The record gives the reactivity of an RNA of 207 nucleotides to DMS and 2A3. For DMS the reverse transcriptase was MarathonRT. The RNA was probed in 150 mM KOAc, 10 mM MgCl2 and 150 mM bicine (pH 8.5) at 24 C. The 2A3 profile rests on 2,810 reads.
RNA sequence: GGGAACGACUCGAGUAGAGUCGAAAAUCACCUCAAGGGGUGGCGCACACAAUGCUGGAGUAAGGACAGCAGUAGUCUCUGUCAGCCACCAUGGGGUGAGCUUAGGCUGUCAAGACUCUAAGCCUCUUGAAUUGCAAUAACUACCCCCCUGAGUAAACUAGGAUAACAUCUUCGGAUGUUAUCCUAGAAAAGAAACAACAACAACAAC
Reactivity to DMS in 0.01 (KOAc 150mM, MgCl2 10mM, bicine 150mM(pH8.5), 24C), signal-to-noise 2, nucleotides 027 to 156: u010c000a050c050c010u010c050a050a080g000g010g000g090u000g030g050c020g000c040a140c130a040c050a070a080u000g000c000u000g000g010a190g000u000a190a210g030g030a060c040a060g030c030a060g020u000a030g010u000c050u000c040u020g030u000c060a180g020c060c000a030c020c040a180u000g010g020g020g020u020g000a090g000c080u000u000a040g010g020c020u000g000u000c040a040a170g000a100c020u000c000u000a120a200g000c020c010u000c020u020u000g010a060a150u010u020g000c000a100a080u000a040a160c100u010a170c010c000c020c010c000c000u010g000a080g020u000a040a040a200
Reactivity to 2A3 in 0.01 (KOAc 150mM, MgCl2 10mM, bicine 150mM(pH8.5), 24C), signal-to-noise 4, nucleotides 027 to 156: u030c000a020c010c010u010c010a070a080g070g060g010g040u040g000g010c020g000c010a030c000a000c010a050a120u100g000c010u010g010g060a100g080u160a160a120g100g070a020c010a000g020c020a000g020u090a070g010u050c060u010c030u160g110u120c030a030g000c000c000a010c000c000a020u030g020g000g000g000u010g010a000g000c000u030u050a030g040g000c020u010g060u120c030a060a060g030a120c020u010c000u150a090a020g000c010c000u040c000u030u130g090a200a160u090u100g000c020a040a160u090a150a070c050u130a080c010c000c000c000c000c000u010g010a030g040u090a040a000a020